An RNA of 177 nucleotides, treated with DMS and 2A3 and read out base by base.
Reactivities are given for positions 27 through 126.
Source: RMDB library OK1LIB, as collected in RNAgym.
The reactions ran in a buffer of 150 mM KOAc, 10 mM MgCl2 and 150 mM bicine (pH 8.5), at 24 C.
2A3 adducts were read by reverse transcription with SuperScript II with manganese.
RNA sequence: GGGAACGACUCGAGUAGAGUCGAAAACGUGAACAUCGCUCUGCUAAGUCCCGUCGUUCUUCCAGUCAGAGCGAGAUUGUAAGCAACCUUAUGCGCAAUGAAGACAUAGAGGGACUUCUAAAAGAAGCCGUCAUCAGUAGUUCGCUACUGAUGACGGAAAAGAAACAACAACAACAAC
Reactivity to DMS in 0.01 (KOAc 150mM, MgCl2 10mM, bicine 150mM(pH8.5), 24C), signal-to-noise 1, nucleotides 027 to 126: c220g000u110g050a110a150c100a110u000c000g000c000u000c000u000g020c100u000a130a070g000u010c060c000c140g010u050c040g020u020u000c010u010u170c100c050a060g000u030c010a010g000a000g000c050g000a040g000a070u020u000g000u000a020a140g000c020a090a070c060c100u000u000a040u020g000c050g000c000a090a060u000g000a120a070g000a140c030a100u050a040g000a130g000g000g000a160c000u000u000c050u000a020a080a000a120g020a020a020g000
Reactivity to 2A3 in 0.01 (KOAc 150mM, MgCl2 10mM, bicine 150mM(pH8.5), 24C), signal-to-noise 3, nucleotides 027 to 126: c050g060u080g120a050a010c050a070u010c000g000c000u030c000u000g050c020u050a040a000g050u040c000c000c020g050u030c010g020u100u010c020u110u020c020c010a080g080u090c040a000g000a000g000c030g000a020g010a020u030u050g040u090a020a080g010c000a060a100c010c060u080u120a040u110g010c010g000c020a020a070u140g060a110a060g020a010c000a020u110a020g090a030g060g000g000a010c000u010u000c050u080a150a090a020a030g150a020a000g020